[RMDB]
RNA sequence: GGGAACGACUCGAGUAGAGUCGAAAACAGUGAUGGAAACAUCACUGAAAAACCGGAAACGGACAUGUCGAUCGCGCGCAUGUCGGGAAACCGUAAACGCGAAAAGAGCUAGCGAAAGCUAGCUCAACGCGAUCAGGGAGUUCGCUCCCUGAUCGCGAAAAGAAACAACAACAACAAC
Reactivity to 2A3 in 0.01 (KOAc 150mM, MgCl2 10mM, bicine 150mM(pH8.5), 24C), signal-to-noise 1, nucleotides 027 to 126: c040a000g000u000g000a000u000g050g020a030a000a020c000a000u000c000a000c020u000g010a000a000a000a000a000c040c000g130g020a070a060a000c000g140g000a000c000a020u040g070u240c030g030a070u000c000g050c000g000c000g010c020a000u000g030u050c050g000g010g040a070a070a000c020c010g000u040a070a200a000c040g000c020g010a010a090a020a040g010a000g000c000u070a000g000c000g040a200a000a000g000c000u010a010g090c000u000c000a000a000
An RNA of 177 nucleotides, treated with 2A3 and read out base by base.
Values cover nucleotides 27 to 126.
For 2A3 the reverse transcriptase was SuperScript II with manganese.